[RMDB]
RNA sequence: GGGAACGACUCGAGUAGAGUCGAAAAUGCGGCAUGCUGUUCCCCCGUGGGGGUUCACGAUGUAUCCGGGGGGUGCACGGUUCCCCCAUGGGGUACGUGAUGUAUCUGUGGGGUGCCCGGUUCCCCCACAGUGGUAGUGUUUCGACACUACCACUGUAAAAGAAACAACAACAACAAC
Reactivity to DMS in 0.01 (KOAc 150mM, MgCl2 10mM, bicine 150mM(pH8.5), 24C), signal-to-noise 4, nucleotides 027 to 126: u000g020c100g020g000c060a030u000g020c040u010g010u010u010c260c000c000c010c010g060u000g000g010g000g000g000u000u000c000a100c010g010a130u000g010u000a010u000c040c060g020g010g020g000g020g020u000g000c020a020c010g000g010u000u000c040c000c000c000c010a010u000g010g010g000g010u000a000c030g000u000g010a100u010g010u000a040u000c030u000g010u000g000g000g010g020u010g000c100c020c020g010g010u000u000c020c000c000c130c090
Reactivity to 2A3 in 0.01 (KOAc 150mM, MgCl2 10mM, bicine 150mM(pH8.5), 24C), signal-to-noise 4, nucleotides 027 to 126: u120g020c060g050g030c040a030u110g090c060u070g060u070u070c000c000c000c000c010g000u020g010g010g010g010g020u010u020c130a140c300g150a300u030g000u030a040u060c060c050g100g010g090g030g030g070u010g010c000a000c010g020g020u020u020c000c000c010c000c010a010u010g010g010g000g020u010a010c030g040u080g070a060u130g050u060a100u080c060u050g090u100g030g000g020g020u040g020c020c010c000g020g020u020u050c000c000c020c000c010